[RMDB]
RNA sequence: GGGAACGACUCGAGUAGAGUCGAAAAGAUGCUGAACUCAGCCUGAUGUUUUUCAAUAAAGACAUACUUCAUUUCAGGCGCUUCGCGAAGUAUGUCGCGGCCUUUUGGAGGAUAGCCAGCUAUUCAACGCUGGGUGAGUCUUCGGACUCACCCAGCGAAAAGAAACAACAACAACAAC
Reactivity to 2A3 in 0.01 (KOAc 150mM, MgCl2 10mM, bicine 150mM(pH8.5), 24C), signal-to-noise 2, nucleotides 027 to 126: g120a090u090g010c040u060g030a030a010c060u010c120a020g000c000c000u000g020a020u070g150u050u090u060u090u170c130a120a100u190a300a240a040g000a000c000a000u020a000c000u000u020c020a300u020u000u100c000a000g030g000c030g100c200u270u230c230g010c100g000a000a000g000u000a000u000g010u010c000g000c050g070g060c000c000u000u240u200u120g080g050a140g030g070a040u070a050g030c000c000a070g080c040u110a110u120u030c100a140a030